RNA sequence: GGGAACGACUCGAGUAGAGUCGAAAAGGCAAUUACUUCGGUAAUUGCCAUAUAAACUUGAGAUAAGAAGGGCGCAACUCAAGAAAAUUGCGAAAUAAACAAACAACGAGAGCUUCGGCUCUCGUAACUUACUCCUAGUGUUCGCACUAGGAGUAAGAAAAGAAACAACAACAACAAC
Reactivity to 2A3 in 0.01 (KOAc 150mM, MgCl2 10mM, bicine 150mM(pH8.5), 24C), signal-to-noise 3, nucleotides 027 to 126: g000g020c010a000a000u000u010a000c020u040u070c180g030g000u010a000a000u000u000g020c010c000a010u020a000u000a010a030a000c010u030u050g060a040g020a080u150a280a100g150a050a130g110g030g010c030g000c030a040a030c010u020c050a060a010g070a100a130a030a050u120u130g050c040g070a050a010a080u210a030a120a020c100a030a090a010c040a040a000c010g000a000g000a000g000c020u060u060c240g050g000c010u000c000u000c000g000u000a000a000
Reactivity to DMS in 0.01 (KOAc 150mM, MgCl2 10mM, bicine 150mM(pH8.5), 24C), signal-to-noise 2, nucleotides 027 to 126: g000g020c000a020a000u020u010a010c000u000u010c210g020g000u010a000a000u010u000g020c000c010a010u010a010u020a040a070a090c030u000u000g000a040g000a120u000a080a070g010a110a080g000g010g010c050g010c070a070a040c020u020c030a020a040g000a090a060a050a110u000u010g000c090g010a070a090a090u050a080a080a100c100a040a080a110c190a070a070c010g010a010g000a000g000c010u010u010c130g010g000c000u000c000u000c010g010u000a020a070
An RNA of 177 nucleotides, treated with 2A3 and DMS and read out base by base. The data come from the RNA Mapping Database (RMDB), library M2PK50. The DMS profile rests on 1,360 reads. The reactions ran in a buffer of 150 mM KOAc, 10 mM MgCl2 and 150 mM bicine (pH 8.5), at 24 C.